RNA sequence: GGGAACGACUCGAGUAGAGUCGAAAAGAUAUGGAAACGGUACCAGCGAGGAUCUCGGAAACGAGGGAGCUGUGUACUCGUUUCCUAAGUCGCGCCAAGCUGGAGGUGUUCGCACCUCCAGCUUGAAGCAUUGUCACGUGUUCGCACGUGACAAUGCAAAAGAAACAACAACAACAAC
Reactivity to 2A3 in 0.01 (KOAc 150mM, MgCl2 10mM, bicine 150mM(pH8.5), 24C), signal-to-noise 2, nucleotides 027 to 126: g000a020u050a050u160g020g000a010a000a000c010g000g000u010a010c000c010a000g000c000g030a260g050g030a020u020c020u010c010g010g040a130a090a040c000g000a000g030g000g010a010g000c020u030g050u180g000u110a000c000u000c000g000u000u000u000c000c000u000a000a010g000u030c020g020c030g060c130c000a020a010g000c000u000g010g020a000g000g030u020g050u120u230c280g070c130a000c000c000u020c000c000a000g010c000u000u000g000a000a000
Reactivity to DMS in 0.01 (KOAc 150mM, MgCl2 10mM, bicine 150mM(pH8.5), 24C), signal-to-noise 2, nucleotides 027 to 126: g000a050u010a300u010g010g000a000a000a020c010g010g030u000a000c010c020a020g000c020g000a040g000g010a030u010c000u000c040g000g000a090a090a210c010g000a020g000g000g000a020g010c000u000g010u010g020u000a010c000u010c030g020u000u000u000c000c010u000a010a080g000u000c020g030c190g010c140c010a010a000g010c000u010g000g010a000g020g020u000g010u000u010c210g030c000a020c000c000u000c000c000a000g010c000u000u000g010a020a130